[RMDB]
RNA sequence: GGGAACGACUCGAGUAGAGUCGAAAAGGCAAAUGUCAAUAUCGGCAGUGUGUUUAUUUUAGCCCAAAACAUAAUGUACAUGUUUCCGUAAAUGAAUGCCGUUCAGGUUCUUACCAUUCUGACUGGUAUUAUGCAGUUCCGACUGUUGAAUUAGUCGAGUAGAGAUCAUAUUCGUAUGAUCUCUACUAAAAGAAACAACAACAACAAC
Reactivity to 2A3 in 0.01 (KOAc 150mM, MgCl2 10mM, bicine 150mM(pH8.5), 24C), signal-to-noise 7, nucleotides 027 to 156: g050g020c020a010a060a130u080g020u070c050a090a140u090a120u300c070g020g000c040a040g020u030g010u010g030u090u090u020a200u030u120u040u130a040g020c010c000c000a020a060a020a010c040a020u210a130a060u180g040u130a050c030a090u070g010u030u050u020c030c040g050u070a020a040a100u140g070a040a020u040g010c000c000g010u020u040c030a020g020g030u070u050c030u100u120a090c060c030a070u120u100c020u050g030a040c020u030g020g010u020a040u070u040a050u130g050c030a020g030u110u060c020c050g050a040c040u020g050u090u050g040a090a130u080u030a040g040u050c030g000
Reactivity to DMS in 0.01 (KOAc 150mM, MgCl2 10mM, bicine 150mM(pH8.5), 24C), signal-to-noise 4, nucleotides 027 to 156: g030g000c020a070a060a080u010g010u020c100a070a090u010a090u010c030g020g000c020a060g020u010g040u000g010u000u000u000a050u030u000u000u010a170g030c040c010c120a060a060a060a050c050a060u020a090a060u010g000u000a120c100a070u000g000u000u010u000c050c020g010u010a050a060a080u000g010a070a080u010g010c010c000g010u000u000c030a050g020g010u000u000c040u000u020a100c050c040a110u000u000c030u010g010a050c040u000g020g010u000a050u000u010a070u000g010c000a060g010u000u000c090c050g010a090c040u000g010u000u000g020a080a100u000u000a060g020u000c040g020
Notes: This 207-nucleotide RNA was probed chemically with 2A3 and DMS. For 2A3 the reverse transcriptase was SuperScript II with manganese. The 2A3 profile rests on 5,782 reads. Reactivities are given for positions 27 through 156. The reactions ran in a buffer of 150 mM KOAc, 10 mM MgCl2 and 150 mM bicine (pH 8.5), at 24 C. The DMS profile rests on 13,983 reads.